[RMDB]
RNA sequence: GGGAACGACUCGAGUAGAGUCGAAAAUGGGUGUCUUCCCUGGCAACCACGAGGACCUCGUGAAUGCCCUGAUCGAGCGGCUGGAGGACGCGCCGCCUGUCAACCAGAUGGUGAAAGUGGAACUGCUGGAGGAGCGGAACACGGCUUUAGGUAACAAAGCUAAAUGCUAGUUCGCUAGCAUUUAGCUAAAAGAAACAACAACAACAAC
Reactivity to 2A3 in 0.01 (KOAc 150mM, MgCl2 10mM, bicine 150mM(pH8.5), 24C), signal-to-noise 3, nucleotides 027 to 156: u080g020g020g010u050g030u020c010u010u030c010c010c010u000g040g000c030a120a230c040c010a030c030g010a040g070g110a090c020c020u020c000g030u030g060a080a090u080g000c060c000c020u090g050a120u130c060g080a030g080c040g030g000c040u080g030g030a070g020g040a040c040g020c010g010c040c000g000c000c010u020g040u050c010a040a090c050c020a040g020a080u050g040g020u100g060a090a120a040g050u040g000g030a070a060c020u070g020c030u010g010g010a040g040g000a020g040c000g020g000a040a000c030a000c020g050g010c030u080u060u110a070g010g020u050a110a000c020a070a100
Reactivity to DMS in 0.01 (KOAc 150mM, MgCl2 10mM, bicine 150mM(pH8.5), 24C), signal-to-noise 1, nucleotides 027 to 156: u000g040g000g020u010g060u010c010u000u000c010c010c000u020g030g020c030a110a230c020c030a050c030g070a230g000g010a110c110c000u000c030g150u020g000a100a160u000g010c070c010c080u000g000a120u000c110g010a130g070c140g080g040c030u000g030g000a140g000g000a150c010g010c090g020c020c000g020c020c040u000g010u010c030a090a120c110c040a070g000a060u000g030g030u000g000a040a000a100g000u010g050g000a130a130c070u010g010c070u000g010g000a110g000g000a050g010c000g000g020a060a130c030a100c110g020g100c000u000u000u010a070g050g000u000a080a110c040a080a080

An RNA of 207 nucleotides, treated with 2A3 and DMS and read out base by base.
Conditions: 150 mM KOAc, 10 mM MgCl2 and 150 mM bicine (pH 8.5), 24 C.
DMS adducts were read by reverse transcription with MarathonRT.
Source: RMDB library OK3TST, as collected in RNAgym.